[RMDB]
An RNA of 177 nucleotides, treated with 2A3 and DMS and read out base by base. For 2A3, 3,449 sequencing reads were counted. For 2A3 the reverse transcriptase was SuperScript II with manganese. The RNA was probed in 150 mM KOAc, 10 mM MgCl2 and 150 mM bicine (pH 8.5) at 24 C.
RNA sequence: GGGAACGACUCGAGUAGAGUCGAAAAGGGGAGGCGGUGGCCUCUGGCUUCGGUGCUGACGAGGCCAAGAUCUGGGACCCCGAUUUCAAGGUGGCGGCCCAAUAUGUGAUGAGCCCGCCCAUCCGCAUACUCCAUUACGUUUCGACGUAAUGGAGUAAAAAGAAACAACAACAACAAC
Reactivity to 2A3 in 0.01 (KOAc 150mM, MgCl2 10mM, bicine 150mM(pH8.5), 24C), signal-to-noise 3, nucleotides 027 to 126: g020g010g000g010a030g040g050c020g030g020u080g020g020c010c010u050c020u020g000g020c020u060u140c150g250g300u170g030c060u070g090a090c090g000a000g010g010c000c000a000a010g030a070u040c070u070g010g090g170a220c000c000c010c010g010a030u050u150u160c120a100a040g060g010u080g040g060c020g030g020c000c000c000a040a050u260a130u190g140u040g030a120u030g030a030g030c000c020c010g010c000c020c010a030u020c020c010g070c040a030
Reactivity to DMS in 0.01 (KOAc 150mM, MgCl2 10mM, bicine 150mM(pH8.5), 24C), signal-to-noise 5, nucleotides 027 to 126: g010g000g020g030a140g020g010c060g020g020u000g010g020c010c010u000c010u000g010g010c000u000u000c250g020g010u000g020c080u000g010a070c150g010a040g010g010c010c000a040a090g010a090u010c100u000g010g000g020a230c000c000c010c020g000a100u000u010u010c170a100a120g000g010u000g010g000c090g010g010c010c020c000a020a100u010a090u000g010u000g000a110u010g010a120g010c110c010c030g010c020c000c030a070u000c010c020g020c180a180